[RMDB]
RNA sequence: GGGAACGACUCGAGUAGAGUCGAAAACGAGUAUCCGCCCGAGCAUUGGAAGGUGCGGUCGUACUUCUCGGGGUUCGAGGGAUCGGCGGGGGUGCUGGUGGUGACGCAGGAUCGGGUGGGGCUCUGGCUUCAUGUGCACAUUCGUGUGCACAUGAAGAAAAGAAACAACAACAACAAC
Reactivity to 2A3 in 0.01 (KOAc 150mM, MgCl2 10mM, bicine 150mM(pH8.5), 24C), signal-to-noise 1, nucleotides 027 to 126: c030g000a030g010u050a140u130c030c000g030c010c020c000g030a080g030c030a120u210u200g170g080a090a020g100g010u120g030c010g030g050u040c040g050u060a060c020u060u050c020u020c050g060g000g030g040u120u160c070g090a080g040g090g010a110u150c060g040g060c080g030g000g010g000g020u120g090c050u040g030g080u020g000g060u120g000a040c040g030c030a010g100g000a060u090c020g010g000g030u150g000g020g000g000c000u010c060u050g040g000
Reactivity to DMS in 0.01 (KOAc 150mM, MgCl2 10mM, bicine 150mM(pH8.5), 24C), signal-to-noise 1, nucleotides 027 to 126: c130g020a080g010u030a070u010c020c030g000c050c000c010g000a110g030c060a230u000u010g000g020a030a120g000g010u000g000c040g040g030u000c110g030u000a040c090u000u000c020u000c020g020g000g000g040u010u000c240g000a120g000g000g000a130u000c060g000g010c210g000g000g000g000g020u010g000c060u020g000g020u010g000g000u010g000a070c120g010c080a100g000g020a190u000c050g000g010g030u000g020g000g000g000c030u000c060u000g010g000